RNA sequence: GGGAACGACUCGAGUAGAGUCGAAAAGCAAGCUAGCCGGCAAAAAAGCAAACUUGACCACCAAGGAUAAAGGAGAUCUUAUCCAAGGAUGCAAAAGAUAAUCUCACUUUUGACACCCACUGAUCUCAAAACGUGCGGUUCUUCGGAACCGCACGAAGAGUCAUAAUGCCUUCGGGCAUUAUGACUCAAAAGAAACAACAACAACAAC
Reactivity to 2A3 in 0.01 (KOAc 150mM, MgCl2 10mM, bicine 150mM(pH8.5), 24C), signal-to-noise 2, nucleotides 027 to 156: g040c040a000a020g020c020u100a030g000c020c040g060g100c190a060a110a060a050a010a000g040c020a060a030a050c030u050u070g070a100c010c040a050c020c020a050a030g050g000a020u030a050a020a000g100g000a010g000a000u010c000u020u030a000u010c000c020a030a060g000g010a020u070g010c020a020a000a010a020g070a050u080a160a160u130c100u060c090a030c030u000u030u030u000g080a070c030a030c020c010c000a060c080u090g000a020u000c000u020c030a010a050a000a080c020g000u000g000c000g030g020u000u010c010u030u030c030g010g010a000a000c010c000g000c000a000c000g000a000a000